[RMDB]
RNA sequence: GGGAACGACUCGAGUAGAGUCGAAAACGAUGGUGUAAAUUUUAGAACAGUCGUUCUAAAUAAUAAGAACACUUAUAGAUCACAGCUUGGAUGCGUUUUCUUUAAUGGUGCUGAUAUUUCUGACACCUGGCGCUGUCGUUCGCGACAGCGAAAAGAAACAACAACAACAAC
Reactivity to 2A3 in 0.01 (KOAc 150mM, MgCl2 10mM, bicine 150mM(pH8.5), 24C), signal-to-noise 2, nucleotides 027 to 129: c050g000a000u170g000g000u000g000u070a000a040a060u040u040u000u010a030g000a040a000c030a100g300u200c110g000u080u000c000u050a010a010a010u170a040a010u070a090a110g140a020a040c000a010c060u040u080a080u090a040g050a030u030c020a010c000a030g020c020u090u180g050g070a040u100g030c030g000u020u090u000u020c000u030u080u020a080a000u060g000g000u000g000c000u000g030a100u000a160u050u270u050c120u020g010a040c000a000c000c000u000g010g000
Reactivity to DMS in 0.01 (KOAc 150mM, MgCl2 10mM, bicine 150mM(pH8.5), 24C), signal-to-noise 2, nucleotides 027 to 129: c100g030a100u060g060g030u000g170u010a000a090a170u000u000u000u000a010g020a040a010c060a240g040u030c150g040u010u010c010u050a000a000a130u020a000a000u020a070a070g040a200a140c070a070c060u000u010a210u070a100g010a020u010c040a050c100a160g000c070u000u060g030g000a030u030g010c000g020u090u000u000u000c050u020u090u000a070a040u060g010g050u020g020c040u000g060a040u000a070u010u050u000c040u080g010a040c050a010c000c060u000g000g000
Chemical mapping of a 170-nucleotide RNA with 2A3 and DMS. 2A3 is a SHAPE reagent: it acylates the 2'-hydroxyl of flexible nucleotides of all four kinds.